[RMDB]
RNA sequence: GGGAACGACUCGAGUAGAGUCGAAAAGAUAUGGACCCUGUAUGGAGAGCUGUCGGAAACGACUGCUCUAUGAAGUACGGGUCCUAAGUCAAAGAUACCCCUGAGACUUCGGUCUCAGGGGUAUCAACUACUCCAUAUUGUUCGCAAUAUGGAGUAGAAAAGAAACAACAACAACAAC
Reactivity to DMS in 0.01 (KOAc 150mM, MgCl2 10mM, bicine 150mM(pH8.5), 24C), signal-to-noise 3, nucleotides 027 to 126: g000a040u010a300u010g010g020a010c000c000c000u020g040u000a000u000g000g000a010g010a000g020c010u000g020u000c000g010g000a100a110a180c010g000a020c000u000g000c000u000c000u010a070u020g000a170a200g000u010a000c010g020g000g010u000c000c000u000a000a060g000u000c040a120a110a170g000a020u010a000c000c000c000c020u000g000a010g010a010c000u000u000c210g020g010u000c000u000c000a000g000g000g010g010u000a000u000c000a040a160
Reactivity to 2A3 in 0.01 (KOAc 150mM, MgCl2 10mM, bicine 150mM(pH8.5), 24C), signal-to-noise 2, nucleotides 027 to 126: g010a010u070a030u100g000g000a000c030c010c140u150g010u000a030u040g030g060a000g000a000g030c060u050g010u020c000g010g000a070a050a020c000g020a000c000u010g050c000u000c010u050a200u050g020a020a000g000u000a000c000g010g010g000u010c000c000u000a010a010g000u010c030a010a010a180g000a000u000a010c000c030c010c010u010g040a000g010a000c050u170u250c300g080g000u000c000u010c000a000g010g000g000g000u000a000u010c000a000a000